Chemical mapping of a 177-nucleotide RNA with DMS and 2A3.
Reactivities are rounded to 0.1 and cut off at 0 and 3.
The DMS profile rests on 10,129 reads.
Conditions: 150 mM KOAc, 10 mM MgCl2 and 150 mM bicine (pH 8.5), 24 C.
RNA sequence: GGGAACGACUCGAGUAGAGUCGAAAAUUAAAGCAGGAGGAGAAAUAUAGCGAGAGAUCGGUCCUCCCACGCGCGUCUCGCGCUGAUAAGAGGAAUAAGAGGAUGAUUAAUAGAUAGCGCGCAAAAAGAAUGUAAUAAGGUUCGCCUUAUUACAUUCAAAAGAAACAACAACAACAAC
Reactivity to DMS in 0.01 (KOAc 150mM, MgCl2 10mM, bicine 150mM(pH8.5), 24C), signal-to-noise 7, nucleotides 027 to 126: u000u010a060a100a100g020c060a040g000g010a050g010g000a080g000a080a090a080u010a080u010a090g010c030g000a050g000a100g010a050u000c050g020g010u010c030c030u000c010c040c050a080c170g010c020g010c030g010u000c070u010c050g020c030g010c020u000g010a080u000a060a090g000a050g000g010a060a070u010a060a100g000a060g000g010a060u000g000a080u010u000a070a090u000a080g000a070u010a070g010c020g010c030g030c140a050a050a060a070a070
Reactivity to 2A3 in 0.01 (KOAc 150mM, MgCl2 10mM, bicine 150mM(pH8.5), 24C), signal-to-noise 6, nucleotides 027 to 126: u090u030a110a010a030g010c040a020g010g030a000g020g020a030g060a070a160a020u230a050u110a100g040c010g010a020g000a000g000a050u050c030g010g050u000c000c010u000c000c010c000a030c040g050c000g010c000g090u050c030u060c070g000c000g000c010u020g010a030u040a170a060g040a030g070g050a070a070u110a110a050g040a010g070g000a020u040g020a020u090u180a100a090u060a100g080a050u050a030g020c020g000c000g020c050a050a070a000a000a060